[RMDB]
RNA sequence: GGGAACGACUCGAGUAGAGUCGAAAAGAUCCAGCCAUUGCGGGUGCAGCGAGAUGAAGCCAUCUAUGAGUGUACAGCUACUAACAGCCUGGGUGAGAUCAACACUAGUGCCAAGCUCUCAGUGCUCGAAGGUACGUGCUAGGGAGACGUGGCACGGGCCAACGGAAGAUUUCGAUCUUCCGUUGGCAAAAGAAACAACAACAACAAC
Reactivity to 2A3 in 0.01 (KOAc 150mM, MgCl2 10mM, bicine 150mM(pH8.5), 24C), signal-to-noise 1, nucleotides 027 to 156: g080a000u000c000c000a000g020c020c000a120u120u150g030c040g000g020g030u000g010c010a000g040c010g010a050g000a020u100g000a020a040g070c030c040a030u030c050u050a130u140g130a080g090u070g000u050a060c010a030g040c010u010a060c040u030a150a090c090a040g040c010c000u050g020g040g000u060g030a080g000a040u050c060a030a030c040a030c070u090a020g000u010g000c000c000a110a000g020c030u000c030u010c010a010g030u020g030c000u060c020g100a070a160g170g110u120a000c030g000u000g000c010u080a140g000g000g010a010g000a000c070g000u040g000g000c000a000c000g010g000
Source: RMDB library OK3TST, as collected in RNAgym.
This 207-nucleotide RNA was probed chemically with 2A3.
2A3 adducts were read by reverse transcription with SuperScript II with manganese.